[RMDB]
About this RNA:
An RNA of 177 nucleotides, treated with 2A3 and DMS and read out base by base. The reactions ran in a buffer of 150 mM KOAc, 10 mM MgCl2 and 150 mM bicine (pH 8.5), at 24 C. The DMS profile rests on 1,584 reads. 2A3 adducts were read by reverse transcription with SuperScript II with manganese. The 2A3 profile rests on 2,838 reads.
RNA sequence: GGGAACGACUCGAGUAGAGUCGAAAAGCAGUAGUGUUCGCACUACUGCAAAUAAAAAGAGGUCCUAGCUACACCCUCUAUAAGCAAAGAUCGAAAGAUCAAAAACAUGCUACUUCGGUAGCAUGAACGUAAAGCAAAGGUUCGCCUUUGCUUUACGAAAAGAAACAACAACAACAAC
Reactivity to 2A3 in 0.01 (KOAc 150mM, MgCl2 10mM, bicine 150mM(pH8.5), 24C), signal-to-noise 2, nucleotides 027 to 126: g000c000a000g010u010a010g000u010g050u040u080c210g000c060a000c010u020a010c010u000g000c000a000a020a010u000a000a040a000a000a000g040a030g000g030u010c070c070u050a020g030c020u090a050c020a050c080c060c000u030c040u090a090u050a180a050g110c070a200a070a060g000a020u010c020g080a050a030a010g010a010u000c030a070a050a000a050a000c000a000u020g010c000u000a000c010u040u050c220g120g000u020a000g000c000a000u000g000a010a030
Reactivity to DMS in 0.01 (KOAc 150mM, MgCl2 10mM, bicine 150mM(pH8.5), 24C), signal-to-noise 2, nucleotides 027 to 126: g000c000a010g000u000a000g000u000g010u010u000c260g030c000a010c010u000a000c000u000g020c000a010a030a080u000a020a060a050a060a100g010a090g010g000u000c020c060u010a150g020c100u000a080c140a140c140c010c000u000c080u000a100u000a040a050g010c110a080a110a160g010a010u000c000g010a110a060a140g000a010u010c020a040a060a060a100a220c030a010u000g000c000u000a010c000u000u020c170g010g010u000a000g000c010a000u000g000a040a040